An RNA of 207 nucleotides, treated with DMS and 2A3 and read out base by base.

[RMDB]
RNA sequence: GGGAACGACUCGAGUAGAGUCGAAAACCCUGUCAUGAGGCCGAAACGAAGGCACGUACCCCUUCGAAUGGCGUCGGGGAGUCAGCGACUAUAUAUGCGCCUAAUGCUGGCAUCCGGGAACGAGCGUAUUAGACAGUAAUCUUCGGAUUACUGUCAAGAAGUUGCAGUGAUUCGUCACUGCAACUUCAAAAGAAACAACAACAACAAC
Reactivity to DMS in 0.01 (KOAc 150mM, MgCl2 10mM, bicine 150mM(pH8.5), 24C), signal-to-noise 1, nucleotides 027 to 156: c020c000c020u000g010u000c100a140u030g000a130g030g050c020c040g000a040a140a230c060g030a080a030g000g040c040a130c140g000u020a190c070c020c010c000u010u000c000g010a120a200u030g030g000c070g030u000c000g010g000g000g000a200g040u000c010a040g040c060g010a170c120u000a170u020a100u000a070u020g040c060g000c020c020u010a110a090u000g020c040u000g030g000c020a150u020c030c030g000g040g010a090a100c110g040a160g000c070g030u020a090u010u030a300g000a010c000a010g010u000a000a000u000c000u000u030c280g040g050a010u000u020a020c020u020g010u000c040a020a010
Reactivity to 2A3 in 0.01 (KOAc 150mM, MgCl2 10mM, bicine 150mM(pH8.5), 24C), signal-to-noise 2, nucleotides 027 to 156: c020c000c070u110g150u060c170a270u150g130a030g040g000c030c020g150a120a110a120c030g000a000a000g030g030c160a050c000g110u300a150c000c000c000c000u030u000c000g070a090a070u230g000g000c030g030u050c020g090g000g000g000a020g010u020c000a050g000c000g140a110c190u050a050u130a030u050a000u300g040c070g010c040c050u050a000a070u090g000c000u000g030g010c000a170u080c000c000g000g090g000a040a050c040g010a090g020c050g000u000a050u080u000a170g000a000c000a000g000u000a000a000u000c020u020u050c100g010g000a000u020u000a010c090u010g000u010c000a010a010
For DMS the reverse transcriptase was MarathonRT. For 2A3 the reverse transcriptase was SuperScript II with manganese.